[RMDB]
RNA sequence: GGGAACGACUCGAGUAGAGUCGAAAACACAACAUCUUGUUCGGUGAACCCAAUUCCAACACGAGUUUAGAAGAAUACAAAUUCACUGAUAACAAAGUGAUGGAGACUUUACACAAUCCACAGGUUACGAACAAAGACCAUUCGUGGUCUUUGUUCGAAAAGAAACAACAACAACAAC
Reactivity to DMS in 0.01 (KOAc 150mM, MgCl2 10mM, bicine 150mM(pH8.5), 24C), signal-to-noise 2, nucleotides 027 to 126: c030a030c100a060a090c100a030u010c050u030u000g010u020u020c130g010g010u000g010a110a130c060c060c100a120a160u020u020c000c070a100a080c040a070c080g000a300g050u000u000u000a050g000a170a070g030a060a030u000a030c290a030a060a170u000u000c010a060c010u000g030a050u030a030a040c130a010a130a080g000u000g000a080u000g030g010a190g030a080c110u000u000u030a060c010a030c120a080a080u010c030c000a110c250a080g010g000u000u000a260
Reactivity to 2A3 in 0.01 (KOAc 150mM, MgCl2 10mM, bicine 150mM(pH8.5), 24C), signal-to-noise 2, nucleotides 027 to 126: c050a000c020a090a050c000a120u060c020u230u220g040u080u040c090g020g020u020g070a110a110c030c040c000a010a030u030u000c040c000a060a010c040a020c060g160a060g000u030u010u200a070g090a150a040g040a050a000u150a170c140a060a180a060u050u000c010a020c050u020g080a120u060a230a030c020a070a090a010g030u020g030a040u040g000g010a030g020a010c000u120u100u050a080c170a010c050a080a150u130c080c010a020c010a190g040g020u120u200a080
Chemical mapping of a 177-nucleotide RNA with DMS and 2A3. Values cover nucleotides 27 to 126. DMS adducts were read by reverse transcription with MarathonRT. The DMS profile rests on 651 reads. For 2A3 the reverse transcriptase was SuperScript II with manganese. The RNA was probed in 150 mM KOAc, 10 mM MgCl2 and 150 mM bicine (pH 8.5) at 24 C.